Record summary
An RNA of 207 nucleotides, treated with 2A3 and read out base by base. The RNA was probed in 150 mM KOAc, 10 mM MgCl2 and 150 mM bicine (pH 8.5) at 24 C. The data come from the RNA Mapping Database (RMDB), library M2RFPK. For 2A3 the reverse transcriptase was SuperScript II with manganese. Values cover nucleotides 27 to 156.
[RMDB]
RNA sequence: GGGAACGACUCGAGUAGAGUCGAAAAUCACCAGAUGCUGCAUCACCUGAUCACUGAUGGCUCAACGGUAUCUGGCGGUACAACUGAAUACUUGUAGCUGCCUUUUGAGCGGGUUGGCUGCAAUCCGAAAAGAGGACACACUUCGGUGUGUCCUCAAGUGCUAUUGAUGCUUCGGCAUCAAUAGCACAAAAGAAACAACAACAACAAC
Reactivity to 2A3 in 0.01 (KOAc 150mM, MgCl2 10mM, bicine 150mM(pH8.5), 24C), signal-to-noise 2, nucleotides 027 to 156: u050c000a000c000c000a000g000a010u000g020c000u020g050c020a010u010c000a010c000c020u030g030a050u050c000a000c050u030g010a000u000g020g000c030u050c070a060a110c010g000g000u010a020u000c000u000g000g000c000g010g000u060a080c060a130a080c190u180g050a060a120u130a230c040u020u030g000u010a000g010c000u000g020c000c030u050u090u030u070g030a030g020c030g000g020g040u170u300g030g000c000u000g000c000a010a020u070c050c020g060a000a050a070a070g000a000g000g000a000c000a000c000a000c010u050u130c210g080g000u000g000u000g040u010c000c000u010c000a010a000